[RMDB]
RNA sequence: GGGAACGACUCGAGUAGAGUCGAAAAGAAUAACAGAUGAAGGGGACUAUAAGGUAAAACUCCGCAGCCUGAUUCGCUUUCUCGAAUGCGAAGUGGAAGUUAUUAAAAUGCCAAGAGGAAAACUCAAACUACGAUUAGGGUUCGCCCUAAUCGUAGUAAAAGAAACAACAACAACAAC
Reactivity to 2A3 in 0.01 (KOAc 150mM, MgCl2 10mM, bicine 150mM(pH8.5), 24C), signal-to-noise 3, nucleotides 027 to 126: g040a000a040u130a140a040c050a010g100a080u070g060a150a010g020g010g000g000a000c040u100a030u030a300a010g070g020u050a020a080a040a100c010u000c000c000g000c000a030g020c000c070u080g030a120u010u000c000g010c060u000u120u090c070u000c070g110a050a040u140g010c000g010a040a000g030u020g000g020a050a050g070u020u000a070u030u110a050a140a010a080u050g040c000c000a070a060g050a040g000g060a020a100a030a050c030u030c040a000a070
Reactivity to DMS in 0.01 (KOAc 150mM, MgCl2 10mM, bicine 150mM(pH8.5), 24C), signal-to-noise 3, nucleotides 027 to 126: g010a150a050u010a030a040c030a070g000a090u020g000a150a090g020g010g000g000a050c100u030a060u050a130a120g000g000u030a050a050a210a150c030u000c010c010g000c030a050g000c030c020u020g010a110u000u000c050g010c050u000u010u030c040u040c250g000a060a070u030g010c020g000a020a030g000u010g000g000a050a100g000u010u020a060u010u030a070a090a050a070u000g000c000c030a100a030g000a030g000g000a050a070a100a080c050u000c070a060a130
The record gives the reactivity of an RNA of 177 nucleotides to 2A3 and DMS. The RNA was probed in 150 mM KOAc, 10 mM MgCl2 and 150 mM bicine (pH 8.5) at 24 C. 2A3 adducts were read by reverse transcription with SuperScript II with manganese. The data come from the RNA Mapping Database (RMDB), library OK1LIB. The DMS profile rests on 4,414 reads. As a SHAPE reagent, 2A3 marks flexible, mostly unpaired nucleotides at the ribose 2'-OH.